Annotation
The record gives the reactivity of an RNA of 177 nucleotides to DMS and 2A3. For 2A3, 17,557 sequencing reads were counted. The DMS profile rests on 9,376 reads. Values cover nucleotides 27 to 126. It was measured as part of the RMDB library OK1LIB. Conditions: 150 mM KOAc, 10 mM MgCl2 and 150 mM bicine (pH 8.5), 24 C.

[RMDB]
RNA sequence: GGGAACGACUCGAGUAGAGUCGAAAACAAUUAACGGCACCUCGUAGGUGGUGCCGAACCGGCGUGAUCUACUAACACGCUACGAGCAGUCUGGUAUGACUGCAAACAAUUAGUAGAGUGGAUGAAACGAUAUCAUGGUAUUCGUACCAUGAUAUCGAAAAGAAACAACAACAACAAC
Reactivity to DMS in 0.01 (KOAc 150mM, MgCl2 10mM, bicine 150mM(pH8.5), 24C), signal-to-noise 4, nucleotides 027 to 126: c060a080a190u070u020a110a240c020g020g010c010a000c000c000u000c070g020u080a140g010g010u000g010g010u020g010c000c000g010a030a030c160c130g000g020c000g000u000g000a160u000c010u000a000c000u010a000a030c000a030c010g000c010u000a060c250g020a140g010c000a010g000u010c020u040g040g010u060a050u040g000a000c000u000g000c000a050a020a030c130a050a060u020u000a020g000u000a010g000a240g030u010g000g000a180u020g010a080a130a120
Reactivity to 2A3 in 0.01 (KOAc 150mM, MgCl2 10mM, bicine 150mM(pH8.5), 24C), signal-to-noise 9, nucleotides 027 to 126: c050a030a150u220u170a170a050c000g000g000c000a010c010c010u060c070g110u160a130g020g290u060g010g000u000g010c000c000g000a010a030c040c020g000g000c000g000u010g000a020u020c000u000a000c000u010a040a010c000a000c000g010c030u040a050c060g040a030g010c010a000g000u010c000u160g160g080u300a140u300g010a010c000u000g000c000a000a010a000c010a000a050u020u000a000g000u000a010g000a040g060u110g070g100a140u100g110a070a100a030